[RMDB]
RNA sequence: GGGAACGACUCGAGUAGAGUCGAAAAAUCAGCACAUCCUUGCGAAACUGGCUGAAACCCCACACCAGCGCCGCGAUGGAGUGGGAUUGCCGGGCGCAAUCCACCACCAGCACGACUGGCAAAUCCACUAUCGAUAUGCGUUCGCGCAUAUCGAUAGAAAAGAAACAACAACAACAAC
Reactivity to DMS in 0.01 (KOAc 150mM, MgCl2 10mM, bicine 150mM(pH8.5), 24C), signal-to-noise 1, nucleotides 027 to 126: a050u000c010a040g020c010a080c090a160u000c010c020u000u050g050c060g020a040a110a110c200u000g020g000c000u000g010a010a030a170c040c010c000c100a100c230a140c010c010a060g000c040g000c240c060g000c000g010a100u010g010g010a160g020u040g010g000g010a010u000u000g000c020c020g010g000g000c140g040c000a020a030u000c000c010a080c010c030a050c010c000a100g000c000a090c030g000a090c000u010g000g000c180a030a070a100u000c090c100a130
Reactivity to 2A3 in 0.01 (KOAc 150mM, MgCl2 10mM, bicine 150mM(pH8.5), 24C), signal-to-noise 2, nucleotides 027 to 126: a000u000c010a000g010c020a020c010a200u120c010c010u210u170g060c050g040a050a040a030c060u060g060g030c000u000g000a090a020a040c020c000c000c010a040c010a020c010c000a010g010c010g070c150c020g010c030g080a060u140g040g020a000g010u030g020g140g050a020u020u020g010c030c000g180g170g000c200g040c050a010a010u040c020c000a010c000c000a030c010c000a010g000c020a010c020g140a160c020u000g020g020c010a050a060a030u040c040c000a050
Background:
An RNA of 177 nucleotides, treated with DMS and 2A3 and read out base by base. For DMS, 855 sequencing reads were counted. The 2A3 profile rests on 1,468 reads. 2A3 is a SHAPE reagent: it acylates the 2'-hydroxyl of flexible nucleotides of all four kinds. The reactions ran in a buffer of 150 mM KOAc, 10 mM MgCl2 and 150 mM bicine (pH 8.5), at 24 C.